The record gives the reactivity of an RNA of 177 nucleotides to 2A3 and DMS.
The DMS profile rests on 1,454 reads.
Reactivities are rounded to 0.1 and cut off at 0 and 3.
RNA sequence: GGGAACGACUCGAGUAGAGUCGAAAAGAUAUGGAACGGUCAUGGGACAUGCUAUGACCUCGGAAACGAGGUCCAUAGCAACAGCCCAUACCGUUCCUAAGUCAAAAGUCGCGGUUCGCCGCGACAAGUGGCUAUAAACGUUCGCGUUUAUAGCCACAAAAGAAACAACAACAACAAC
Reactivity to 2A3 in 0.01 (KOAc 150mM, MgCl2 10mM, bicine 150mM(pH8.5), 24C), signal-to-noise 1, nucleotides 027 to 126: g030a000u040a030u190g030g000a010a000c040g010g030u160c300a040u010g000g000g030a090c150a190u290g000c010u020a000u020g000a000c000c000u010c010g000g040a050a030a040c030g010a000g030g020u010c050c030a000u020a000g040c020a000a010c010a010g060c000c000c000a000u000a000c000c000g000u000u000c000c000u010a000a000g010u000c010a020a030a000a200g010u020c010g000c010g010g050u070u060c300g090c120c010g000c010g010a000c000a000a010
Reactivity to DMS in 0.01 (KOAc 150mM, MgCl2 10mM, bicine 150mM(pH8.5), 24C), signal-to-noise 2, nucleotides 027 to 126: g010a030u010a300u010g020g010a010a010c000g010g020u000c300a000u000g030g010g010a060c120a230u000g010c000u000a000u010g000a020c000c000u000c000g000g000a100a160a180c020g010a030g010g030u010c120c080a000u000a010g000c000a020a030c290a260g010c000c000c000a000u000a000c000c010g010u000u000c000c000u000a010a060g010u000c030a120a060a120a080g030u000c020g000c000g030g000u000u000c170g000c000c000g000c000g030a000c010a000a100